The data come from the RNA Mapping Database (RMDB), library OK2TST. The record gives the reactivity of an RNA of 177 nucleotides to 2A3 and DMS.
[RMDB]
RNA sequence: GGGAACGACUCGAGUAGAGUCGAAAAAUGUAUUUGCUUUUUUCUCGAUAUCGAUGAUAAAGUGUAGCGCCAAGACACCAAUUUGAUUUCCCGUGAGGGUAAUAAAUUGCCCUUGAUGGCGAACUGCUAUCUGGUGAUCAUUCGUGAUCACCAGAUAAAAAGAAACAACAACAACAAC
Reactivity to 2A3 in 0.01 (KOAc 150mM, MgCl2 10mM, bicine 150mM(pH8.5), 24C), signal-to-noise 2, nucleotides 027 to 126: a000u110g050u150a190u060u120u080g060c020u050u050u020u030u020u010c000u010c000g110a110u050a210u300c020g030a050u050g030a020u050a040a030a060g020u030g040u090a020g060c020g000c060c020a000a020g040a030c050a030c030c020a040a040u030u060u140g150a120u000u020u020c040c000c000g000u040g030a000g010g040g040u030a000a020u030a050a080a090u100u020g030c030c000c060u000u020g100a080u060g030g000c000g000a080a020c050u060g010c000
Reactivity to DMS in 0.01 (KOAc 150mM, MgCl2 10mM, bicine 150mM(pH8.5), 24C), signal-to-noise 2, nucleotides 027 to 126: a050u000g020u010a070u010u010u000g000c000u000u010u000u010u010u020c070u010c030g020a290u020a120u000c020g020a050u000g000a030u000a010a040a040g010u010g000u000a030g000c030g020c050c020a030a080g000a090c070a050c140c060a030a010u000u000u000g010a120u010u000u000c010c000c000g030u000g000a060g000g000g000u010a000a150u000a030a040a070u010u000g000c020c000c020u000u000g000a110u010g000g020c020g000a060a080c110u000g020c140
As a SHAPE reagent, 2A3 marks flexible, mostly unpaired nucleotides at the ribose 2'-OH. For 2A3, 1,073 sequencing reads were counted. Conditions: 150 mM KOAc, 10 mM MgCl2 and 150 mM bicine (pH 8.5), 24 C. DMS adducts were read by reverse transcription with MarathonRT.